RNA sequence: GGGAACGACUCGAGUAGAGUCGAAAAGCUCCUUUGCGCUUUUUUUUCGGAUUAGGCGUGGAGGCGAAAGUCACCCUCCUCGCAUCGCAAGUUCGUGCUUGCGACUUAUACGUAGGGCGAGGGGUGGAAAACAGUAUGGGAUUCGUCCCAUACUGAAGGAUGCAAGAUGAUUCGUCAUCUUGCAUCCAAAAGAAACAACAACAACAAC
Reactivity to DMS in 0.01 (KOAc 150mM, MgCl2 10mM, bicine 150mM(pH8.5), 24C), signal-to-noise 2, nucleotides 027 to 156: g000c040u000c000c010u000u000u000g010c010g000c000u000u000u010u010u010u000u000u000c280g000g020a060u010u000a040g020g010c000g020u000g000g010a030g040g030c060g010a070a050a110g020u010c020a070c020c000c010u000c000c000u000c020g040c130a070u000c000g000c020a020a010g020u000u010c250g000u010g010c010u000u000g000c010g000a050c050u010u000a160u010a070c110g000u000a080g010g020g000c030g000a060g010g000g000g020u010g010g000a060a070a090a150c010a020g020u000a010u010g010g020g010a120u000u000c300g020u010c020c010c000a000u000a000c000u000g000a060a080
Reactivity to 2A3 in 0.01 (KOAc 150mM, MgCl2 10mM, bicine 150mM(pH8.5), 24C), signal-to-noise 4, nucleotides 027 to 156: g020c040u040c010c000u000u010u000g000c000g000c050u000u020u010u010u020u000u030u080c190g130g040a030u040u020a020g000g000c000g000u010g010g010a000g000g020c030g060a120a040a030g110u100c060a070c020c000c000u010c000c010u010c000g010c020a020u010c000g000c000a000a020g000u170u300c230g180u300g070c010u000u000g000c000g000a000c000u040u070a050u030a090c180g080u080a080g030g100g040c030g010a000g010g020g000g010u140g030g020a070a130a000a010c000a000g000u010a000u000g000g020g000a010u020u050c110g070u020c020c000c000a000u000a000c000u000g000a010a020
This 207-nucleotide RNA was probed chemically with DMS and 2A3. For 2A3, 4,675 sequencing reads were counted. The reactions ran in a buffer of 150 mM KOAc, 10 mM MgCl2 and 150 mM bicine (pH 8.5), at 24 C. It was measured as part of the RMDB library M2RFPK. Values cover nucleotides 27 to 156. For DMS, 5,586 sequencing reads were counted.